[RMDB]
RNA sequence: GGGAACGACUCGAGUAGAGUCGAAAAGAGGUACCCGUAUUCGUACGGGUACCUCCAACAAGAGAUUUGGGGUUUUCAGAUUCUGGUAGCCAGUCAUUUUUGUUACUCACUUUCGAGUGAGUAACAAUCAUGAAACACGUUUCGACGUGUUUCAUGAAAAAGAAACAACAACAACAAC
Reactivity to DMS in 0.01 (KOAc 150mM, MgCl2 10mM, bicine 150mM(pH8.5), 24C), signal-to-noise 1, nucleotides 027 to 126: g010a010g000g020u000a000c000c000c020g010u000a010u000u010c240g040u010a000c010g000g000g010u000a000c000c010u000c000c030a070a090c070a040a130g010a160g010a080u000u010u000g000g020g020g020u000u000u000u000c060a030g020a120u000u000c060u000g010g000u000a060g000c010c010a100g010u030c150a080u000u000u000u000u000g030u000u000a000c000u000c000a000c000u010u000u010c160g000a010g000u000g010a010g000u010a000a000c000a000a040
Reactivity to 2A3 in 0.01 (KOAc 150mM, MgCl2 10mM, bicine 150mM(pH8.5), 24C), signal-to-noise 2, nucleotides 027 to 126: g000a020g000g000u000a010c010c000c010g020u000a000u020u110c280g030u000a000c000g030g000g000u000a000c000c000u000c000c010a000a000c010a010a030g100a000g000a060u070u060u220g050g010g010g010u080u060u110u110c070a050g090a250u120u050c010u060g020g050u060a040g030c040c020a020g060u110c060a090u040u150u080u040u050g000u000u000a000c010u000c000a010c010u080u120u150c210g130a000g000u010g020a000g000u010a000a000c000a000a000

Structure probing data (DMS and 2A3) for a 177-nucleotide construct. For DMS, 1,508 sequencing reads were counted. For DMS the reverse transcriptase was MarathonRT. As a SHAPE reagent, 2A3 marks flexible, mostly unpaired nucleotides at the ribose 2'-OH.